Record summary:
The data come from the RNA Mapping Database (RMDB), library OK2TST. The record gives the reactivity of an RNA of 177 nucleotides to 2A3 and DMS. The 2A3 profile rests on 1,704 reads. 2A3 adducts were read by reverse transcription with SuperScript II with manganese.
RNA sequence: GGGAACGACUCGAGUAGAGUCGAAAAAGCUGCACCAAAUAACACUGUCUCUUGGUACACUGGGCUUACCCAACACGGGAAAGUCCCUCUUACCUUUCCACCUGGGCAGGGUGUACCUCUUAAUGCCGAUCCGCUAUGAUUUCGAUCAUAGCGGAUCAAAAGAAACAACAACAACAAC
Reactivity to 2A3 in 0.01 (KOAc 150mM, MgCl2 10mM, bicine 150mM(pH8.5), 24C), signal-to-noise 2, nucleotides 027 to 126: a010g070c070u070g000c030a030c030c030a080a060a220u130a060a030c090a010c030u020g010u040c000u000c000u080u100g000g000u050a020c030a000c180u030g000g020g000c010u020u090a100c000c000c030a090a050c170a070c260g000g040g000a040a010a000g110u110c000c030c000u000c010u040u000a040c000c000u040u060u000c070c060a120c020c070u070g020g010g000c000a020g000g080g000u010g010u010a060c030c020u020c030u130u110a180a060u110g080c090c080
Reactivity to DMS in 0.01 (KOAc 150mM, MgCl2 10mM, bicine 150mM(pH8.5), 24C), signal-to-noise 2, nucleotides 027 to 126: a130g010c080u000g030c010a040c010c010a010a100a070u000a080a070c160a300c030u000g000u000c000u010c130u000u000g010g010u000a020c150a010c030u010g030g000g030c030u000u010a080c000c000c030a100a100c300a190c190g010g000g010a090a030a020g040u000c020c000c010u010c050u000u010a040c030c060u000u000u020c070c030a020c200c070u020g020g000g010c040a080g010g020g000u020g000u020a000c100c000u000c120u010u020a030a130u000g010c120c080